Record summary
An RNA of 177 nucleotides, treated with 2A3 and DMS and read out base by base. Reactivities are given for positions 27 through 126. The data come from the RNA Mapping Database (RMDB), library OK2TRN. For 2A3 the reverse transcriptase was SuperScript II with manganese. The reactions ran in a buffer of 150 mM KOAc, 10 mM MgCl2 and 150 mM bicine (pH 8.5), at 24 C.
RNA sequence: GGGAACGACUCGAGUAGAGUCGAAAAGAACGUGCCCUCUGUCCCACGACCCAGGGUGAGGCCGUUCACCCUCGGGCUGGGGGCCACCGGGACUGGAGGCUCUAGGCCUGGAAUGAGGGGAGGGGACAUCCGCUAUGAUUUUCGAAUCAUAGCGGAUAAAAGAAACAACAACAACAAC
Reactivity to 2A3 in 0.01 (KOAc 150mM, MgCl2 10mM, bicine 150mM(pH8.5), 24C), signal-to-noise 3, nucleotides 027 to 126: g050a060a010c040g070u120g030c020c010c000u060c060u030g030u030c000c020c020a230c080g070a060c010c010c030a030g030g000g010u020g010a040g040g100c040c010g020u050u000c000a020c000c010c010u010c010g010g000g010c000u030g020g000g000g000g030c010c010a000c000c010g130g030g200a060c110u230g020g010a020g050g000c010u020c000u050a050g030g000c010c000u030g050g100a130a110u150g030a220g020g010g010g010a030g000g000g000g000a000c000
Reactivity to DMS in 0.01 (KOAc 150mM, MgCl2 10mM, bicine 150mM(pH8.5), 24C), signal-to-noise 4, nucleotides 027 to 126: g010a060a070c070g010u000g010c030c020c100u010c100u010g010u000c000c010c010a160c040g010a210c010c000c000a080g010g020g010u000g010a080g010g020c070c090g010u000u000c000a040c000c010c000u000c030g010g010g000c020u010g000g010g000g000g020c000c030a030c010c000g010g000g020a150c160u000g010g000a110g030g020c020u000c010u000a220g020g000c000c000u010g000g020a070a130u020g000a120g000g000g000g000a200g010g000g000g010a060c050